[RMDB]
RNA sequence: GGGAACGACUCGAGUAGAGUCGAAAACGCUGGGAUCCGUGGAGAUCGACAUGCUCUUGUAACAAGCACUGAAGCGCGCACGGUGCCGCCCAAGAGCAACAGCGAUCUCGUAACAUCGGAUCCUGUGCUGAAGCGCGCACGGCAACCGAAAGGUGCGGAUUACCGGACAGUUCGCUGUCCGGUAAUCAAAAGAAACAACAACAACAAC
Reactivity to 2A3 in 0.01 (KOAc 150mM, MgCl2 10mM, bicine 150mM(pH8.5), 24C), signal-to-noise 4, nucleotides 027 to 156: c010g000c010u030g000g010g000a000u010c010c000g010u010g030g000a020g000a000u000c010g120a150c080a160u060g000c000u010c000u030u010g060u100a300a100c090a240a040g000c000a000c000u030g030a220a030g020c000g000c000g000c000a010c030g000g000u010g020c020c050g120c040c060c000a000a000g000a000g040c000a030a100c060a080g110c000g000a000u000c000u000c000g010u030a030a000c030a210u220c020g000g010a000u010c000c000u000g000u010g000c000u030g010a140a050g000c000g000c010g000c000a000c010g010g010c000a040a040c010c000g060a070a030a040g020g000u010g010c020g020
Reactivity to DMS in 0.01 (KOAc 150mM, MgCl2 10mM, bicine 150mM(pH8.5), 24C), signal-to-noise 1, nucleotides 027 to 156: c010g040c040u010g040g020g020a030u000c000c000g070u010g020g010a010g000a000u000c000g000a100c070a300u000g000c010u000c000u000u000g020u000a040a020c050a070a070g040c020a030c010u010g000a040a070g040c000g040c010g000c010a300c050g010g030u010g010c000c000g010c230c010c010a040a010g010a000g000c020a020a020c100a070g010c040g000a010u000c000u000c010g000u000a010a100c160a070u000c030g010g000a000u000c010c000u000g040u010g010c050u010g040a070a040g080c000g030c050g000c000a300c090g010g000c010a070a140c100c020g040a180a050a170g020g000u000g000c000g010